The data come from the RNA Mapping Database (RMDB), library OK2TST. Chemical mapping of a 177-nucleotide RNA with DMS and 2A3.

RNA sequence: GGGAACGACUCGAGUAGAGUCGAAAAGCAUCGACGGCACCCGCCGUGCCGAGACACUAAGCGUCGAGGAGUUUGUCGCUCUCGCUAAUGCAUGUCUCCCAUAAGUGGGAACCGGUUUUGGGAAACACACGAUUAGGAUCUUCGGAUCCUAAUCGUGAAAAGAAACAACAACAACAAC
Reactivity to DMS in 0.01 (KOAc 150mM, MgCl2 10mM, bicine 150mM(pH8.5), 24C), signal-to-noise 3, nucleotides 027 to 126: g020c080a080u010c090g010a130c040g020g000c050a150c050c050c110g020c060c080g010u000g000c060c020g000a080g000a040c030a030c070u000a130a120g010c060g010u010c130g010a080g000g000a080g020u000u010u010g030u020c160g020c020u000c010u000c030g000c040u000a090a070u020g020c060a090u010g000u010c030u010c000c030c000a050u010a090a080g050u000g010g040g000a150a120c060c000g010g010u000u000u000u000g000g000g020a090a100a120c100a160
Reactivity to 2A3 in 0.01 (KOAc 150mM, MgCl2 10mM, bicine 150mM(pH8.5), 24C), signal-to-noise 2, nucleotides 027 to 126: g030c010a020u060c060g130a070c050g010g020c040a080c000c050c000g090c050c020g030u000g000c030c070g030a020g010a010c020a000c030u080a100a070g010c010g050u030c040g090a060g080g040a050g020u030u100u210g270u150c050g000c050u000c010u000c010g010c030u090a120a000u080g010c050a020u090g010u000c000u090c000c000c020a070u100a090a050g030u050g010g020g030a020a030c010c000g050g030u010u040u150u140g080g000g000a060a010a010c060a000